[RMDB]
RNA sequence: GGGAACGACUCGAGUAGAGUCGAAAAGAUUAGGCAGAUAACAACUAUUACGCGUCUUGCCACUGUAUUGUAAAGUAAACAACAAGAUAUAAGUAUAAUACACCUACGCGACAAGAUGAAUCAGCAAGAAUUGCAUUACAUUCGUGUAAUGCAAUUCAAAAGAAACAACAACAACAAC
Reactivity to 2A3 in 0.01 (KOAc 150mM, MgCl2 10mM, bicine 150mM(pH8.5), 24C), signal-to-noise 5, nucleotides 027 to 126: g080a030u130u180a050g060g000c050a030g050a120u080a140a050c040a040a030c050u100a050u150u150a060c060g000c020g030u000c030u040u040g000c000c010a020c020u030g000u000a030u080u050g020u030a020a070a120g050u050a120a080a060c060a050a020c020a080a060g040a060u070a010u030a220a000g020u020a020u000a050a030u020a030c010a010c020c020u080a030c060g010c020g050a060c020a040a010g020a070u070g030a060a060u080c020a020g060c020a060a040
Reactivity to DMS in 0.01 (KOAc 150mM, MgCl2 10mM, bicine 150mM(pH8.5), 24C), signal-to-noise 5, nucleotides 027 to 126: g010a090u000u000a100g020g010c030a050g000a110u000a050a100c090a060a100c090u010a060u010u010a090c100g010c080g010u000c040u000u010g010c020c030a090c080u000g010u000a010u000u000g000u000a030a040a130g010u000a060a090a060c090a080a110c110a110a100g010a060u010a060u010a070a100g010u000a040u010a020a050u000a020c010a040c130c100u000a060c120g020c040g000a030c060a030a030g000a040u000g010a080a050u010c060a070g000c140a080a070
This 177-nucleotide RNA was probed chemically with 2A3 and DMS. Reactivities are given for positions 27 through 126. The data come from the RNA Mapping Database (RMDB), library M2PK90. The DMS profile rests on 4,557 reads. Conditions: 150 mM KOAc, 10 mM MgCl2 and 150 mM bicine (pH 8.5), 24 C.